[RMDB]
RNA sequence: GGGAACGACUCGAGUAGAGUCGAAAACUCUGUUUGCCGAGGAUGGGCUCUGGGGAAGCUGGUGUGCAGAGGCUAGGUGCCCAGCCUUGCUUUAGGAAAGCCUCACAAAGUCUGGGGCCCGCCGGGAACUAAGGUCAACUUUCGAGUUGACCUUAGUAAAAGAAACAACAACAACAAC
Reactivity to 2A3 in 0.01 (KOAc 150mM, MgCl2 10mM, bicine 150mM(pH8.5), 24C), signal-to-noise 1, nucleotides 027 to 126: c010u050c070u050g050u090u170u130g100c060c000g060a100g090g100a210u130g020g000g020c000u000c010u030g020g020g020g000a080a060g050c100u070g030g090u080g080u080g120c060a040g020a020g060g050c000u030a010g000g030u030g050c010c010c000a020g020c020c020u010u060g010c000u000u090u060a070g010g030a200a120a000g000c010c010u010c000a030c010a070a170a000g050u100c020u010g020g000g000g000c040c030c000g060c030c000g010g000g030a050
Reactivity to DMS in 0.01 (KOAc 150mM, MgCl2 10mM, bicine 150mM(pH8.5), 24C), signal-to-noise 4, nucleotides 027 to 126: c050u000c070u000g000u010u000u000g030c070c020g000a150g040g020a080u010g030g020g000c000u010c020u000g000g000g000g010a100a150g000c070u000g000g040u010g010u000g040c070a130g010a080g020g000c010u000a040g010g010u000g000c010c010c030a180g010c010c000u000u000g010c020u000u000u000a140g020g000a140a140a120g010c030c030u010c030a070c080a090a080a120g000u010c040u000g010g010g010g010c020c020c020g010c040c010g010g000g010a140